[RMDB]
RNA sequence: GGGAACGACUCGAGUAGAGUCGAAAAUGUUGGCGCAGGAUCUGGGCGCGGAUUUUCGCUAUGUGGCAUUGUCGCAGUAUUUGCGUCUGGUGGCGGUGUCGAUGUCGUUGCCGCUCGUGGCUCAUAACGCAUCAUACCAUUUCGAUGGUAUGAUGCGAAAAGAAACAACAACAACAAC
Reactivity to 2A3 in 0.01 (KOAc 150mM, MgCl2 10mM, bicine 150mM(pH8.5), 24C), signal-to-noise 1, nucleotides 027 to 126: u110g010u050u100g130g000c020g000c050a030g010g070a110u020c050u080g040g020g000c020g000c030g020g000a030u100u080u030u080c080g000c060u080a060u210g070u120g010g000c050a080u080u200g030u020c040g000c030a000g040u060a120u080u080u060g020c010g030u030c040u060g010g010u060g000g020c010g010g040u000g000u010c030g040a080u110g030u050c030g020u050u040g080c000c000g090c000u020c030g050u070g050g000c000u000c070a050u040a150a000
Reactivity to DMS in 0.01 (KOAc 150mM, MgCl2 10mM, bicine 150mM(pH8.5), 24C), signal-to-noise 2, nucleotides 027 to 126: u000g010u000u000g020g030c020g010c050a080g020g020a130u010c050u010g000g000g000c000g060c050g010g000a040u000u000u000u010c080g000c060u000a070u000g020u000g010g000c010a120u000u000g030u010c050g000c030a040g020u000a090u000u010u010g020c110g000u000c020u000g020g020u010g000g030c220g000g000u000g010u000c000g010a060u010g010u000c020g010u010u000g010c000c030g010c100u000c080g020u010g000g020c030u000c070a070u000a080a180